[RMDB]
Source information: An RNA of 177 nucleotides, treated with 2A3 and DMS and read out base by base. For 2A3, 1,481 sequencing reads were counted. For 2A3 the reverse transcriptase was SuperScript II with manganese.
RNA sequence: GGGAACGACUCGAGUAGAGUCGAAAAGCACCAGAAUCACGAAUUGUUGGUAUUUUCCGGCCUUCCGGUAAUACGGAACGGGUGAAGAAUCAGGAGCGUGAUGAUGAAUACGAAACUGAGCGUGAUGCCUAUCGGACUGAUUCGUCAGUCCGAUAGGAAAAGAAACAACAACAACAAC
Reactivity to 2A3 in 0.01 (KOAc 150mM, MgCl2 10mM, bicine 150mM(pH8.5), 24C), signal-to-noise 2, nucleotides 027 to 126: g070c050a140c070c000a060g090a050a010u010c000a000c030g050a070a100u110u100g010u060u040g080g000u060a070u060u080u030u000c030c000g100g070c070c070u030u030c010c010g010g020u040a070a000u060a060c010g020g000a030a090c060g000g080g000u040g010a080a060g010a020a040u030c010a020g100g050a080g080c080g080u070g050a040u080g000a110u140g070a040a050u070a070c080g100a110a110a030c030u050g030a000g060c000g020u000g060a040u090g030
Reactivity to DMS in 0.01 (KOAc 150mM, MgCl2 10mM, bicine 150mM(pH8.5), 24C), signal-to-noise 3, nucleotides 027 to 126: g020c110a130c010c020a130g010a200a040u000c000a040c020g010a080a080u010u000g000u000u000g010g010u000a070u000u010u010u000c020c040g000g030c070c040u010u000c000c000g000g020u000a080a090u040a200c010g000g000a010a020c140g020g010g010u000g000a070a090g000a050a060u010c020a050g020g000a080g030c120g010u010g010a050u010g040a100u000g010a110a050u000a040c060g000a060a060a070c020u010g000a130g000c020g020u000g000a050u000g010

Source: RMDB library OK2TRN, as collected in RNAgym.